[RMDB]
RNA sequence: GGGAACGACUCGAGUAGAGUCGAAAAGGGAGAGACCGUGGUAGUCGAUGCGCACCUCCUCGAGUAUGGAUAGCCCUUCCGGUCCCGGUACCUCACGGGUGUGGACGGUGAGACCGUGCCAGGAGGAAAGCACCUACGGUUUCGACCGUAGGUGCUUAAAAGAAACAACAACAACAAC
Reactivity to 2A3 in 0.01 (KOAc 150mM, MgCl2 10mM, bicine 150mM(pH8.5), 24C), signal-to-noise 1, nucleotides 027 to 126: g040g000g050a030g000a030g040a020c040c040g040u090g000g100u070a150g090u100c060g030a060u070g070c100g000c030a030c010c000u090c020c040u040c050g020a050g010u040a020u000g040g010a090u020a080g040c000c000c040u020u030c000c000g110g060u090c000c000c000g000g000u180a260c020c010u110c030a040c040g030g000g030u170g110u120g060g000a000c010g040g030u030g020a090g040a030c050c010g000u010g020c000c000a000g000g020a030g000g100a100
Reactivity to DMS in 0.01 (KOAc 150mM, MgCl2 10mM, bicine 150mM(pH8.5), 24C), signal-to-noise 2, nucleotides 027 to 126: g000g030g000a140g000a080g000a060c030c030g000u010g000g030u000a090g030u010c140g010a090u020g020c070g020c130a210c040c020u000c020c010u000c200g050a180g020u010a020u000g000g000a110u000a290g000c010c010c020u020u020c000c000g030g000u000c010c020c030g010g000u000a090c090c130u010c030a120c000g010g000g000u000g020u010g000g020a060c300g000g030u000g000a020g020a220c000c000g010u000g000c010c000a030g010g000a000g000g010a070